[RMDB]
RNA sequence: GGGAACGACUCGAGUAGAGUCGAAAAUAACAUUUCACCGGAGAGUUCAAGAAACGACGUCGUAGGAAACAAAAGAGUGAACGAUACUGAGAUGUUAUCGUUGGUGUGUAGCAAGAAGCAACGCAUCCAGGCUCCUCUAAUUCGUUAGAGGAGCCUGAAAAGAAACAACAACAACAAC
Reactivity to DMS in 0.01 (KOAc 150mM, MgCl2 10mM, bicine 150mM(pH8.5), 24C), signal-to-noise 1, nucleotides 027 to 126: u060a040a050c040a110u000u000u000c030a110c160c050g000g000a060g040a300g020u000u010c060a110a070g030a170a070a100c100g000a140c140g000u000c060g050u000a090g000g000a120a090a130c080a000a060a130a040g010a060g000u000g020a030a030c000g030a100u000a050c070u000g010a090g000a020u000g000u030u010a000u020c090g010u000u000g020g020u010g000u000g010u000a160g000c000a110a060g010a110a160g000c000a080a000c000g000c030a010u000c060
This 177-nucleotide RNA was probed chemically with DMS. It was measured as part of the RMDB library OK2TRN. For DMS, 660 sequencing reads were counted.